Structure probing data (2A3 and DMS) for a 207-nucleotide construct.
For DMS the reverse transcriptase was MarathonRT.
Source: RMDB library OK3TST, as collected in RNAgym.
The RNA was probed in 150 mM KOAc, 10 mM MgCl2 and 150 mM bicine (pH 8.5) at 24 C.
For DMS, 3,935 sequencing reads were counted.
RNA sequence: GGGAACGACUCGAGUAGAGUCGAAAAUCAGAUCAAGAAACUCUGGGGCUAUGGGAUACCUCUCAAGGAUGUAGCAGACACUCUCGUCAUGUCUCGUUUGUUAGACCCUACCCGUAAGGGUGGGCAUAGUCUGGAUGCUCUAUCAGGUAACGAGAAGCGUGUCUACUGUUUUCGAACAGUAGACACGAAAAGAAACAACAACAACAAC
Reactivity to 2A3 in 0.01 (KOAc 150mM, MgCl2 10mM, bicine 150mM(pH8.5), 24C), signal-to-noise 3, nucleotides 027 to 156: u100c000a020g060a070u080c040a050a080g040a090a070a020c080u080c120u060g020g020g000g000c040u070a040u070g050g000g020a050u080a140c040c010u050c010u020c050a040a040g030g010a040u080g080u130a030g020c080a020g020a030c030a030c040u050c000u020c040g050u040c060a060u080g050u030c010u000c040g020u030u070u070g110u040u040a040g010a060c010c010c000u030a060c040c000c000g030u080a000a090g010g000g000u010g000g000g000c020a010u060a020g020u000c030u030g030g030a060u060g010c010u020c010u060a080u110c050a050g030g070u040a030a000c010g040a000g000a080a000g060
Reactivity to DMS in 0.01 (KOAc 150mM, MgCl2 10mM, bicine 150mM(pH8.5), 24C), signal-to-noise 2, nucleotides 027 to 156: u010c000a100g030a090u000c070a090a120g010a120a080a100c050u000c040u000g020g000g010g000c050u000a060u000g000g020g020a150u000a040c030c020u010c030u000c060a090a120g050g000a050u010g010u000a050g000c030a070g000a100c030a080c050u000c030u000c030g030u010c070a130u010g010u000c000u000c030g000u000u010u000g010u010u000a100g010a080c060c010c000u000a020c030c020c020g000u010a120a180g030g030g040u010g000g010g000c060a010u000a080g010u000c030u000g000g010a090u000g000c040u000c050u000a100u010c040a060g000g020u000a070a080c040g010a040g010a070a140g010